[RMDB]
RNA sequence: GGGAACGACUCGAGUAGAGUCGAAAAGAAGACGUCAGAAACGCAGGCGGCUUCCAGUGCCGGUGAUGCAGGUGCGUCAGCCACUGCGGCGGCAGCGUCGGAAAAGGCGGCAGCCGCAUCGGCAGCCGAGUCAGUAGGGUUUCGACCCUACUGACUCAAAAGAAACAACAACAACAAC
Reactivity to DMS in 0.01 (KOAc 150mM, MgCl2 10mM, bicine 150mM(pH8.5), 24C), signal-to-noise 2, nucleotides 027 to 126: g000a160a050g000a100c000g000u050c020a080g000a080a090a090c270g000c060a080g000g010c050g010g020c000u020u000c020c150a130g010u050g000c000c020g020g040u020g000a150u040g010c000a060g020g060u030g020c040g000u010c110a110g040c000c020a060c050u000g010c020g000g010c000g010g000c110a070g000c000g000u020c020g050g040a070a070a070a180g000g040c040g010g000c000a040g010c000c000g000c000a000u010c000g000g010c000a010g030c020c050
Reactivity to 2A3 in 0.01 (KOAc 150mM, MgCl2 10mM, bicine 150mM(pH8.5), 24C), signal-to-noise 4, nucleotides 027 to 126: g070a030a000g020a000c020g020u030c040a000g190a140a300a030c110g020c140a070g020g000c000g000g010c020u040u000c030c000a070g050u020g070c010c010g010g070u050g010a050u140g000c030a060g060g090u050g020c020g080u100c140a030g000c010c010a040c010u040g040c000g020g000c010g010g000c030a060g110c040g010u010c000g050g030a090a130a010a020g010g010c010g000g020c020a000g040c000c000g010c010a000u020c000g010g000c020a010g040c010c070
This 177-nucleotide RNA was probed chemically with DMS and 2A3. Reactivities are given for positions 27 through 126. For 2A3, 3,163 sequencing reads were counted.